[RMDB]
RNA sequence: GGGAACGACUCGAGUAGAGUCGAAAACUGCUCGCAGGCUGGCUUGCGAGACAUUAUCCGGAAGUGAAAAAACUAGUACUUCUAAGCACAGCCGUAAAUGCAAUGGAAUGGCCACAACUUGUCGAAAGCACCUCAGUGCUUUCGAGCACUGAGGUGCAAAAGAAACAACAACAACAAC
Reactivity to 2A3 in 0.01 (KOAc 150mM, MgCl2 10mM, bicine 150mM(pH8.5), 24C), signal-to-noise 3, nucleotides 027 to 126: c030u070g000c000u000c000g000c000a000g010g000c060u060g060g030c000u040u000g010c020g010a070g040a010c040a090u170u220a080u070c040c110g040g010a030a110g050u110g090a120a000a030a060a130a070c150u180a100g090u060a080c000u090u090c020u050a010a100g040c050a030c020a190g040c010c000g030u000a000a230a000u090g020c040a080a090u120g020g090a160a040u060g020g030c000c030a050c030a070a060c000u050u090g020u030c030g060a260a000a000
Reactivity to DMS in 0.01 (KOAc 150mM, MgCl2 10mM, bicine 150mM(pH8.5), 24C), signal-to-noise 1, nucleotides 027 to 126: c040u000g040c000u030c000g030c030a100g000g000c050u060g010g020c020u010u000g000c100g000a010g000a130c050a040u000u010a090u020c060c090g000g000a010a040g000u020g000a000a110a080a060a090a050c140u030a040g000u030a050c050u000u000c070u000a030a090g000c010a090c020a070g010c000c000g010u080a050a070a080u000g000c050a090a070u030g020g010a030a040u000g010g010c060c010a050c030a110a160c200u000u030g000u000c050g000a050a040a070